[RMDB]
RNA sequence: GGGAACGACUCGAGUAGAGUCGAAAAGUUGGCUGUUCGCAGCCAACAAAAAACCUUUGUGCGAGAAGCGUCGAUAAGCCUCUCUUUCCCAUUGGGAAAGAAAGGCUUUUGACGACGCCUCGCACUCUGGUAAAAAAGCUUCGUUUCGACGAAGCAACGGAGUAAGUUUGUUCGCAAACUUACUCCGAAAAGAAACAACAACAACAAC
Reactivity to 2A3 in 0.01 (KOAc 150mM, MgCl2 10mM, bicine 150mM(pH8.5), 24C), signal-to-noise 1, nucleotides 027 to 156: g010u000u000g000g020c010u020g040u100u150c280g000c130a000g000c000c000a020a000c000a010a010a000a000a000a000c000c000u010u000u020g000u000g000c000g020a040g040a300a100g000c000g010u000c000g010a040u000a040a000g000c000c000u000c010u000c000u000u000u000c040c030c130a300u200u300g030g000g000a000a000a000g000a000a000a000g010g000c000u010u020u000u000g010a010c000g010a020c000g000c020c000u000c000g000c010a000c000u000c000u000g000g000u040a110a060a030a000a000a000g000c000u000u000c000g030u020u070u110c190g040a020c000g000a010a000g000c000a000a000